About this RNA: An RNA of 177 nucleotides, treated with 2A3 and DMS and read out base by base. It was measured as part of the RMDB library M2PK50. The DMS profile rests on 1,032 reads. DMS (dimethyl sulfate) methylates the pairing face of unpaired adenines and cytosines. For 2A3, 1,696 sequencing reads were counted. Values cover nucleotides 27 to 126. The RNA was probed in 150 mM KOAc, 10 mM MgCl2 and 150 mM bicine (pH 8.5) at 24 C. DMS adducts were read by reverse transcription with MarathonRT.
[RMDB]
RNA sequence: GGGAACGACUCGAGUAGAGUCGAAAAACUUCCUACUUCGGUAGGAAGUAAAAGUAGUAAAGUUGGUGCUUAGACCACGCCCUCUACCGUAAUAAUAGAUAAACCCUUAGCACUUCGGUGCUAAGAAGCGUAAUGCCUUAUUCGUAAGGCAUUACGCAAAAGAAACAACAACAACAAC
Reactivity to 2A3 in 0.01 (KOAc 150mM, MgCl2 10mM, bicine 150mM(pH8.5), 24C), signal-to-noise 1, nucleotides 027 to 126: a000c010u020u000c000c000u000a000c000u020u060c130g070g000u000a000g000g020a000a000g000u000a000a000a020a000g000u010a000g000u020a000a020a040g050u080u040g030g000u090g090c180u110u150a060g030a050c000c010a000c000g000c000c000c000u000c010u010a020c020c000g050u020a000a090u080a180a040u030a170g170a080u150a120a150a050c010c040c000u000u000a000g000c000a010c000u050u030c300g000g000u000g000c010u000a000a000g000a010a010
Reactivity to DMS in 0.01 (KOAc 150mM, MgCl2 10mM, bicine 150mM(pH8.5), 24C), signal-to-noise 1, nucleotides 027 to 126: a030c000u000u000c000c000u000a010c010u000u030c130g020g010u010a010g000g000a000a010g000u000a010a060a050a070g000u000a020g000u010a020a020a040g080u020u020g000g010u020g030c300u000u000a150g000a030c010c030a000c000g000c000c000c020u000c000u000a010c010c080g060u020a120a070u020a060a090u020a060g000a150u020a060a130a110c160c040c010u020u000a010g010c010a010c000u030u010c170g000g010u000g010c000u000a000a000g010a060a020